[RMDB]
RNA sequence: GGGAACGACUCGAGUAGAGUCGAAAAGGUGAAAUGAUGAUUCUGUUUAUCCAUUCGCUGAGUACGCUGCUCUGACCUUCUUCCCAGUCUCGGUUCCUGUUCUGGGAGCUUGGGGCUGAGUAGCCACCAGCCCUGCUCUCUGCAGUGUUCUAUUGUGGAUUGCUUGUGUGCUGGCAGGCUACUACUGGUAAGAAUGGCUAGUGUCAGCAGGGAUGGCUCCUCUCUGGGUUCCAUCUCACCAAGAUGAGUGGUGCAAAUCUGAUCACAGAUGCGGGUUCGCCCGCAUCAAAAGAAACAACAACAACAAC
Reactivity to 2A3 in 0.01 (KOAc 150mM, MgCl2 10mM, bicine 150mM(pH8.5), 24C), signal-to-noise 6, nucleotides 027 to 266: g120g000u020g030a030a090a160u120g040a040u050g000a010u070u060c110u120g110u060u230u160a110u120c000c000a000u000u000c000g000c020u020g020a030g140u050a080c140g010c000u010g010c000u020c010u040g170a210c000c000u000u010c000u010u000c000c000c000a000g010u000c010u010c000g020g020u010u020c010c000u110g210u300u300c140u300g020g010g000a030g000c040u200u300g020g000g000g000c000u000g000a000g000u000a000g000c000c000a000c000c000a000g010c010c010c000u010g010c000u000c000u000c000u000g000c000a020g010u020g150u300u140c140u230a060u050u020g010u010g010g020a020u010u010g010c070u230u090g100u030g070u120g160c010u010g000g020c030a160g010g010c010u000a000c000u030a090c020u020g020g010u130a020a000g020a040a030u210g010g000c010u020a010g010u030g230u270c010a000g000c000a010g000g010g000a000u000g000g000c010u010c010c010u120c020u090c130u230g060g020g000u060u000c000c000a010u000c000u000c000a030c020c020a070a030g070a230u110g000a010g010u010g020g020u030g000c000a010a010a020u010c010u040g030a020u040c040a000c030a050
Reactivity to DMS in 0.01 (KOAc 150mM, MgCl2 10mM, bicine 150mM(pH8.5), 24C), signal-to-noise 4, nucleotides 027 to 266: g010g020u010g000a020a260a150u020g010a150u010g010a010u000u000c140u010g010u010u010u020a080u030c000c010a020u000u000c000g020c030u000g000a250g010u000a130c190g000c010u010g000c010u010c010u020g000a110c010c010u000u010c020u000u010c000c010c000a020g000u000c010u000c010g000g000u000u000c010c000u000g010u020u030c210u030g010g000g000a020g010c020u000u020g060g010g000g000c010u000g000a010g010u000a010g000c010c010a300c020c010a010g010c020c010c000u000g010c010u000c030u000c000u000g000c010a000g010u000g000u030u020c180u030a020u000u000g010u000g000g000a020u000u000g010c020u010u000g000u010g020u000g020c000u000g000g010c090a070g010g000c010u000a000c000u010a030c130u010g000g000u030a040a020g000a030a020u020g040g010c010u000a010g010u000g000u010c020a010g000c020a300g010g000g000a010u000g000g000c070u000c000c010u000c260u020c210u010g010g000g000u000u000c010c000a000u000c000u000c010a070c060c040a110a060g010a070u000g000a020g050u000g000g000u020g000c030a040a030a030u010c010u000g000a090u000c020a030c040a150